Conditions: 150 mM KOAc, 10 mM MgCl2 and 150 mM bicine (pH 8.5), 24 C. Structure probing data (2A3 and DMS) for a 177-nucleotide construct. The 2A3 profile rests on 1,397 reads.

RNA sequence: GGGAACGACUCGAGUAGAGUCGAAAAACCGCUCGUGCGCGGCGGGUGCCGUUGCAGCAUCUCAUCGGGACUGUGUCGUUUGGGCCCGUGGUGCUGCAUGUCGGCCCGGGUGUGUUUGUACCGCGUCCUACACUUCCAGGUUCGCCUGGAAGUGUAGAAAAGAAACAACAACAACAAC
Reactivity to 2A3 in 0.01 (KOAc 150mM, MgCl2 10mM, bicine 150mM(pH8.5), 24C), signal-to-noise 2, nucleotides 027 to 126: a000c000c000g070c050u010c050g130u090g040c090g000c020g100g000c000g050g020g050u100g050c060c020g000u010u010g000c010a010g000c000a020u040c070u030c070a140u140c010g010g000g020a090c060u030g030u070g120u300c150g120u110u260u220g060g030g060c010c000c000g010u000g000g020u000g020c000u000g020c000a000u020g000u030c000g000g010c020c000c000g050g070g050u090g000u050g010u090u140u150g050u110a070c030c000g000c000g010u010c010
Reactivity to DMS in 0.01 (KOAc 150mM, MgCl2 10mM, bicine 150mM(pH8.5), 24C), signal-to-noise 2, nucleotides 027 to 126: a060c030c010g000c050u000c070g010u000g020c030g000c030g000g010c020g000g010g010u000g020c020c010g000u010u010g000c010a000g000c000a030u010c030u020c180a100u010c000g020g000g010a110c010u010g020u010g010u000c220g010u010u010u010g000g010g000c010c010c010g020u010g000g010u000g000c010u000g010c000a010u010g010u000c040g020g000c010c110c030g010g010g010u010g020u010g010u000u000u000g010u010a170c030c010g000c050g020u010c150
Values cover nucleotides 27 to 126.